[RMDB]
RNA sequence: GGGAACGACUCGAGUAGAGUCGAAAAUUGUAGAUAAGUCUUUGUCAAUUGAGGAGUUUGCUGACGUAGUAAAGGAACAAGUCUCAGACUUGCUUGUUAAAUUACUGCGUGGAAUGCCGAUUCCAGAGUGCACCAGGCUUCGGCCUGGUGAAAAGAAACAACAACAACAAC
Reactivity to DMS in 0.01 (KOAc 150mM, MgCl2 10mM, bicine 150mM(pH8.5), 24C), signal-to-noise 2, nucleotides 027 to 129: u080u030g000u020a080g010a040u020a060a090g000u040c010u060u020u030g050u000c000a060a070u060u020g040a200g000g010a060g050u010u000u030g000c050u000g010a060c030g030u020a000g030u010a000a000a000g080g000a040a050c050a050a000g050u010c120u040c300a200g010a100c230u030u010g010c050u020u040g000u010u070a000a000a000u000u000a000c000u010g020c000g020u020g110g040a060a010u040g040c030c080g090a120u010u010c000c100a130g030a180g000u020g070
Reactivity to 2A3 in 0.01 (KOAc 150mM, MgCl2 10mM, bicine 150mM(pH8.5), 24C), signal-to-noise 3, nucleotides 027 to 129: u090u050g020u040a000g020a110u070a080a080g040u000c010u000u060u030g130u040c030a060a200u030u080g110a080g030g010a010g000u000u000u010g040c000u000g020a000c000g000u030a000g000u030a030a020a010g170g050a000a000c010a000a030g060u050c020u020c130a110g050a180c070u070u070g000c000u010u040g010u030u050a040a050a000u000u000a000c000u000g000c010g030u020g000g130a080a040u050g040c030c020g000a010u020u020c020c010a030g020a030g050u060g020
The record gives the reactivity of an RNA of 170 nucleotides to DMS and 2A3. Reactivities are given for positions 27 through 129. The reactions ran in a buffer of 150 mM KOAc, 10 mM MgCl2 and 150 mM bicine (pH 8.5), at 24 C.